[RMDB]
RNA sequence: GGGAACGACUCGAGUAGAGUCGAAAAGAUAUGGACGAAAUGCAACAGCCACAGUAUCGGAAACGAUACGUGGACAUGCAUAGUCCUAAGUCAAAGACCUUCCCUUGGUUCGCCAAGGGAAGGUCAAUCAUGCAAAACGGUUCGCCGUUUUGCAUGAAAAAGAAACAACAACAACAAC
Reactivity to DMS in 0.01 (KOAc 150mM, MgCl2 10mM, bicine 150mM(pH8.5), 24C), signal-to-noise 3, nucleotides 027 to 126: g000a030u000a240u000g000g000a010c000g030a060a150a070u000g000c010a030a120c300a120g000c000c000a010c000a170g010u030a000u000c000g010g010a050a020a100c000g010a000u000a000c010g000u000g000g000a050c190a100u000g000c010a020u010a300g000u000c000c000u010a030a080g020u010c010a050a110a130g000a020c000c000u000u000c000c000c000u010u010g010g010u000u020c240g020c000c000a010a010g000g000g010a000a000g020g010u000c010a000a030
Reactivity to 2A3 in 0.01 (KOAc 150mM, MgCl2 10mM, bicine 150mM(pH8.5), 24C), signal-to-noise 1, nucleotides 027 to 126: g020a030u050a030u070g000g000a000c000g080a300a290a010u010g000c000a050a080c060a300g070c000c030a050c040a090g010u030a010u000c000g010g010a030a010a020c010g000a010u020a010c000g000u010g000g080a060c060a020u040g000c010a000u020a000g000u040c000c020u000a130a000g000u020c040a100a140a070g010a000c010c000u010u030c010c000c000u000u000g030g010u030u060c300g040c090c000a000a000g000g010g000a000a000g010g000u000c000a000a000